RNA sequence: GGGAACGACUCGAGUAGAGUCGAAAACGACGGGGGCAUAUCUGCGGAGUUACAUUUGUUGCUAGAAUAAGCGUGAAUCAUAGUACACCGAGGGUCCACAUCUUCGUGUUGCUGUUCGCAGCAAUAUGACACAGCUAACAUUCGUGUUAGCUGUGUCAAAAGAAACAACAACAACAAC
Reactivity to DMS in 0.01 (KOAc 150mM, MgCl2 10mM, bicine 150mM(pH8.5), 24C), signal-to-noise 2, nucleotides 027 to 126: c120g020a080c160g000g010g010g000g020c070a040u030a030u020c040u000g000c050g000g000a070g000u020u000a070c070a080u010u010u000g020u000u000g010c030u020a090g000a100a070u000a070a120g000c060g000u010g010a070a030u020c120a070u020a080g010u000a080c100a090c040c030g010a110g010g010g010u010c060c100a020c130a050u010c070u000u020c140g010u000g000u000u000g040c010u020g030u000u000c120g010c060a030g010c060a030a020u020a050u000
Reactivity to 2A3 in 0.01 (KOAc 150mM, MgCl2 10mM, bicine 150mM(pH8.5), 24C), signal-to-noise 3, nucleotides 027 to 126: c050g050a020c010g000g000g000g000g000c040a040u020a060u080c050u050g080c040g010g030a040g060u070u020a080c030a140u110u000u090g070u100u090g030c020u070a060g080a300a160u170a250a040g020c000g040u050g040a020a020u100c070a080u080a040g010u030a020c020a010c060c010g000a000g030g020g010u060c090c010a070c010a100u000c020u020u050c030g030u000g010u140u050g000c000u020g000u000u020c120g000c040a010g000c000a030a020u110a100u110